Chemical mapping of a 207-nucleotide RNA with DMS and 2A3. The RNA was probed in 150 mM KOAc, 10 mM MgCl2 and 150 mM bicine (pH 8.5) at 24 C. The 2A3 profile rests on 3,675 reads.
RNA sequence: GGGAACGACUCGAGUAGAGUCGAAAAGCACAAGUUUAGAGCUGUGGGAGGACGGGGCUUCUCUCUGCUCCUGGAGUAGCUCAGUGAUGGCAUGAGUAAUCUCAUUCGGAGAUAACCCAUGUUUAAGCCCUGGCCAAAUGGCCUCUCCUGGUCCACCAAUAGAGGUAUUGUUCGCAAUACCUCUAUUAAAAGAAACAACAACAACAAC
Reactivity to DMS in 0.01 (KOAc 150mM, MgCl2 10mM, bicine 150mM(pH8.5), 24C), signal-to-noise 3, nucleotides 027 to 156: g010c040a080c050a060a050g030u000u000u010a080g000a100g040c030u000g020u010g000g000g000a150g000g020a060c040g020g000g040g000c020u000u000c040u010c040u000c040u010g010c040u000c030c060u000g000g010a080g020u010a060g010c060u000c030a060g020u010g010a170u010g010g000c010a040u010g000a020g010u000a110a060u000c010u000c010a300u010u010c210g020g020a050g010a020u000a070a040c010c010c020a020u000g010u000u000u000a050a160g020c000c010c020u010g010g030c010c020a070a090a100u000g010g000c010c020u000c030u010c030c030u000g020g010u000c020c030a070c060c070
Reactivity to 2A3 in 0.01 (KOAc 150mM, MgCl2 10mM, bicine 150mM(pH8.5), 24C), signal-to-noise 4, nucleotides 027 to 156: g030c020a020c040a090a090g030u090u190u170a060g060a020g030c050u050g010u060g040g010g010a050g010g010a010c050g000g000g030g000c050u040u010c030u030c000u000c020u030g010c010u020c030c040u070g010g010a030g020u120a000g020c030u030c100a010g010u030g080a100u140g020g000c020a020u000g000a010g020u050a110a110u010c010u010c010a130u300u240c180g170g020a000g000a010u030a050a030c000c000c000a010u010g030u000u070u050a040a020g000c010c010c010u010g020g000c010c010a110a270a280u250g010g010c000c010u030c000u010c000c010u040g050g000u040c020c020a030c010c030